Notes: The record gives the reactivity of an RNA of 177 nucleotides to DMS and 2A3. Source: RMDB library OK2TST, as collected in RNAgym. The DMS profile rests on 18,245 reads.
[RMDB]
RNA sequence: GGGAACGACUCGAGUAGAGUCGAAAACAUGAGGUUUCCACAGAUGUGGAGGUGGAGGCACAGCUGGAGGCCAUGCCAAUGGUGCAGGGGAGACCCCUGUGACUUGCUUCUGGAAACCCUGCUGGCAUAAAACUCAUAACUUCGGUUAUGAGUUUUAAAAAGAAACAACAACAACAAC
Reactivity to DMS in 0.01 (KOAc 150mM, MgCl2 10mM, bicine 150mM(pH8.5), 24C), signal-to-noise 9, nucleotides 027 to 126: c070a080u010g000a110g020g010u000u000u000c000c000a260c100a130g010a110u010g020u000g000g010a060g010g020u000g000g010a060g010g010c020a040c050a050g000c050u000g000g010a150g010g010c020c150a050u000g020c050c040a160a100u010g010g010u000g010c010a020g000g010g010g010a200g000a190c110c010c050c020u000g010u000g000a030c030u000u000g010c040u000u010c040u000g010g000a060a050a060c030c010c020u000g010c070u000g010g000c100a130
Reactivity to 2A3 in 0.01 (KOAc 150mM, MgCl2 10mM, bicine 150mM(pH8.5), 24C), signal-to-noise 4, nucleotides 027 to 126: c050a060u140g040a110g050g000u020u030u010c030c010a030c050a050g200a130u220g050u140g070g030a050g020g050u050g010g060a050g020g000c040a010c020a040g000c040u080g070g020a060g030g060c010c010a020u060g020c010c020a070a070u090g080g010u100g030c010a000g040g010g020g020a150g100a110c040c000c010c020u000g010u010g030a020c010u030u070g030c010u020u030c020u040g030g020a060a050a060c010c000c020u050g030c030u010g040g030c010a030